[RMDB]
RNA sequence: GGGAACGACUCGAGUAGAGUCGAAAACUCUCACACAGUCUGUGAGUCUCUGAGUCACAGAGUGACUCUCACAGACUGUGUCUGACAGACAGUCUCAGUCAGUGUGAGUCUCAGACACACUCAGUGACCUGAGAAGACAUUUCGAUGUCUUCUCAGGAAAAGAAACAACAACAACAAC
Reactivity to DMS in 0.01 (KOAc 150mM, MgCl2 10mM, bicine 150mM(pH8.5), 24C), signal-to-noise 4, nucleotides 027 to 126: c160u000c020u000c090a090c010a010c010a010g000u000c010u000g000u000g000a020g000u010c110u010c100u000g000a140g020u010c140a140c030a150g010a100g010u000g000a050c080u010c010u000c000a010c010a010g010a010c000u000g000u000g020u000c020u010g010a030c140a100g020a100c090a090g000u000c080u000c030a090g010u000c040a040g000u000g020u000g020a070g000u000c090u010c110a160g000a090c030a050c060a020c030u000c070a060g010u000g010a190
Reactivity to 2A3 in 0.01 (KOAc 150mM, MgCl2 10mM, bicine 150mM(pH8.5), 24C), signal-to-noise 3, nucleotides 027 to 126: c000u000c000u010c000a010c010a010c000a000g010u000c000u000g020u010g010a020g120u010c030u000c010u150g140a110g090u090c040a030c020a260g150a070g160u040g020a030c020u020c000u000c060a000c000a000g000a000c000u010g000u000g000u000c000u010g010a010c000a020g060a030c040a050g180u010c030u000c080a050g050u040c010a030g000u030g010u030g100a050g070u020c020u020c070a030g040a040c010a000c000a010c040u050c020a090g050u020g130a100

Annotation: This 177-nucleotide RNA was probed chemically with DMS and 2A3. Source: RMDB library OK2TRN, as collected in RNAgym. For DMS, 4,642 sequencing reads were counted. Conditions: 150 mM KOAc, 10 mM MgCl2 and 150 mM bicine (pH 8.5), 24 C.